[RMDB]
RNA sequence: GGGAACGACUCGAGUAGAGUCGAAAAGUGUUAAUUACGUGCGCGGGCCAACGGCAUUGCAAGGAGGCGGCAAGUUAUCUUCCAGCCGAUGCCACAUACGCGAUCAUCACUGAGAAGACCAACUCAAAGAAACGCGGCGAAAUUUUGGACAAAGCUACUAAUAAAUCUCAUUCGUGAGAUUUAUUAGAAAAGAAACAACAACAACAAC
Reactivity to DMS in 0.01 (KOAc 150mM, MgCl2 10mM, bicine 150mM(pH8.5), 24C), signal-to-noise 2, nucleotides 027 to 156: g040u010g000u000u010a030a090u000u010a070c030g020u000g040c000g010c030g020g030g030c040c000a080a080c050g000g000c040a130u000u010g030c070a070a170g020g010a130g040g010c220g010g050c110a060a100g030u000u000a080u000c010u000u010c090c020a150g000c050c030g000a100u010g010c030c000a100c040a190u000a090c010g020c000g010a080u000c010a030u010c030a060c000u000g000a140g000a090a150g000a090c010c000a080a080c040u000c040a040a050a240g000a110a050a060c050g030c030g000g020c050g000a070a060a130u000u000u000u000g010g000a150c060a060a030a090g010c030u010a150
Reactivity to 2A3 in 0.01 (KOAc 150mM, MgCl2 10mM, bicine 150mM(pH8.5), 24C), signal-to-noise 4, nucleotides 027 to 156: g060u040g040u140u090a120a110u180u130a090c050g030u080g140c040g010c020g030g000g050c030c040a060a040c040g020g030c040a080u040u110g010c070a070a110g040g000a030g010g070c030g040g000c080a030a030g020u080u070a070u070c020u040u030c010c000a020g020c060c060g010a020u020g010c030c000a030c020a060u230a060c030g030c070g050a030u090c030a010u010c010a010c040u060g030a040g000a240a030g030a040c040c030a010a040c040u060c070a080a130a030g050a080a120a010c060g010c000g030g010c020g010a020a080a090u150u160u130u110g030g000a010c000a000a090a030g080c030u080a050
Source information
Chemical mapping of a 207-nucleotide RNA with DMS and 2A3. For 2A3, 2,003 sequencing reads were counted. For 2A3 the reverse transcriptase was SuperScript II with manganese. It was measured as part of the RMDB library OK3TST.